[RMDB]
RNA sequence: GGGAACGACUCGAGUAGAGUCGAAAAUGGAGUAAUCGGUGAGUACAGGGGCAUCGACGCGGCCCAGUCGCGGGACCGCUAGCGGGCCGAGAGCGCUCAACGGCCGGUGAACAUGGGGGUCCGGCGCUAUCGUGGGAAGGUUCGCCUUCCCACGAUAAAAAGAAACAACAACAACAAC
Reactivity to DMS in 0.01 (KOAc 150mM, MgCl2 10mM, bicine 150mM(pH8.5), 24C), signal-to-noise 1, nucleotides 027 to 126: u010g010g000a160g010u020a050a110u010c070g040g060u000g010a110g020u000a130c070a110g000g020g010g040c020a060u000c050g010a040c160g000c090g000g000c010c010c030a050g000u000c100g010c050g020g010g000a030c020c020g030c020u020a040g030c020g010g000g040c000c020g000a130g010a080g000c060g010c030u020c080a070a120c070g020g000c000c010g020g010u030g020a050a100c140a120u000g020g010g000g000g010u000c020c030g040g000c030g000c120
Chemical mapping of a 177-nucleotide RNA with DMS. The data come from the RNA Mapping Database (RMDB), library OK2TRN. The reactions ran in a buffer of 150 mM KOAc, 10 mM MgCl2 and 150 mM bicine (pH 8.5), at 24 C.